[RMDB]
Overview:
An RNA of 177 nucleotides, treated with 2A3 and DMS and read out base by base. Conditions: 150 mM KOAc, 10 mM MgCl2 and 150 mM bicine (pH 8.5), 24 C. For DMS the reverse transcriptase was MarathonRT. Values cover nucleotides 27 to 126. The DMS profile rests on 1,534 reads.
RNA sequence: GGGAACGACUCGAGUAGAGUCGAAAAACAGCUCGAUGGCUACGGCCAUCGAGCUGAUCUGGGGUAUGGCGUAAGUACAGAGAAGCCAUCACCUCAGAAGCAGCUGGCGAUACGUCGCCAGCUGCAAUAAGUACGUUAGAUUCGUCUAACGUACUUAAAAAGAAACAACAACAACAAC
Reactivity to 2A3 in 0.01 (KOAc 150mM, MgCl2 10mM, bicine 150mM(pH8.5), 24C), signal-to-noise 2, nucleotides 027 to 126: a010c000a000g000c010u040c010g010a000u020g030g000c040u090a140c300g160g000c000c000a010u000c000g010a010g000c010u000g010a000u000c000u000g000g000g010g000u000a010u000g020g000c000g030u110a120a130g090u120a170c120a070g180a020g070a270a030g000c010c010a000u020c060a030c000c000u000c000a000g000a010a050g000c000a000g020c000u000g000g000c000g010a040u060a130c290g060u020c010g000c000c040a000g000c000u000g000c000a000a000
Reactivity to DMS in 0.01 (KOAc 150mM, MgCl2 10mM, bicine 150mM(pH8.5), 24C), signal-to-noise 1, nucleotides 027 to 126: a170c000a000g030c000u000c000g030a000u000g000g010c000u000a030c230g030g000c000c010a010u000c000g000a010g010c000u000g000a010u000c000u000g000g000g000g000u000a010u000g000g040c000g010u020a110a160g010u010a130c300a200g000a110g010a130a270g010c000c000a000u000c140a000c000c000u000c000a020g000a090a120g000c000a000g000c000u010g000g040c010g020a060u000a050c220g000u000c030g000c010c000a020g000c020u010g000c000a010a050